[RMDB]
RNA sequence: GGGAACGACUCGAGUAGAGUCGAAAAGAAAGAAAGAAAGGGGUAGUGAUGAAUAAAAUCAUACCAUCAAACUAUGAAAGCUUAAGGAUAAGCUUUUUGAUGUUAACUAUUUUUAUUCUGAGCCCAACUCUACGGGAAAGUUCGCUUUCCCGUAGAGAAAAGAAACAACAACAACAAC
Reactivity to DMS in 0.01 (KOAc 150mM, MgCl2 10mM, bicine 150mM(pH8.5), 24C), signal-to-noise 3, nucleotides 027 to 126: g000a070a020a300g000a050a040a070g010a060a100a110g020g000g010g030u000a050g010u020g030a010u000g020a080a100u030a050a060a100a070u000c040a020u000a020c080c000a030u030c070a060a000a050c100u040a130u000g000a010a000a020g010c000u010u000a070a190g030g010a170u010a000a000g000c030u000u000u010u000u030g000a060u040g000u000u010a050a070c060u000a020u000u000u000u000u010a060u050u040c010u000g010a140g010c000c000c000a070a170
Reactivity to 2A3 in 0.01 (KOAc 150mM, MgCl2 10mM, bicine 150mM(pH8.5), 24C), signal-to-noise 5, nucleotides 027 to 126: g020a010a050a000g040a000a010a010g090a030a050a020g090g030g000g000u050a090g170u060g050a010u010g030a110a220u160a110a080a030a000u020c020a010u010a020c020c000a010u100c050a030a020a010c040u060a040u170g040a020a000a000g010c010u040u050a070a060g190g100a210u100a120a000g180c020u000u000u000u010u020g060a070u080g000u030u070a040a050c040u020a120u050u030u020u010u000a220u030u000c010u020g040a040g020c010c000c010a000a090
This 177-nucleotide RNA was probed chemically with DMS and 2A3.
Source: RMDB libraries RFM100 and RFMREP, as collected in RNAgym.
The reactions ran in a buffer of 150 mM KOAc, 10 mM MgCl2 and 150 mM bicine (pH 8.5), at 24 C.
Values cover nucleotides 27 to 126.